[RMDB]
RNA sequence: GGGAACGACUCGAGUAGAGUCGAAAAACUGCCAUACGUGGCAGAAACACGCCUUACCGGGACUAAACAGCGUGUCUAAAAAACAGUCCUUCAUACCUGAUCUGGAGGGUAGAUCAGGAAUACUAAAAAAAUCGGGUGAAGUUCGCUUCACCCGAAACUGAUAAGCUCUGUUCGCAGAGCUUAUCAGAAAAGAAACAACAACAACAAC
Reactivity to 2A3 in 0.01 (KOAc 150mM, MgCl2 10mM, bicine 150mM(pH8.5), 24C), signal-to-noise 1, nucleotides 027 to 156: a000c000u000g010c010c010a020u030a060c130g090u030g000g000c000a000g000a000a010a000c000a000c010g000c000c000u000u070a010c010c050g010g000g000a000c010u060a100a050a010c010a010g000c000g000u000g010u020c080u050a040a000a000a010a000a000c050a000g000u000c020c000u000u110c050a090u120a130c000c000u010g000a000u000c010u020g040g090a060g050g080g000u020a010g000a010u010c020a000g040g040a010a020u110a070c090u080a040a010a000a010a010a050a150u050c000g000g000g000u000g020a020a010g000u060u200c190g040c060u000u000c000a000c000c000c000g000a000a000a000

Background: The record gives the reactivity of an RNA of 207 nucleotides to 2A3. Source: RMDB library M2RFOK, as collected in RNAgym.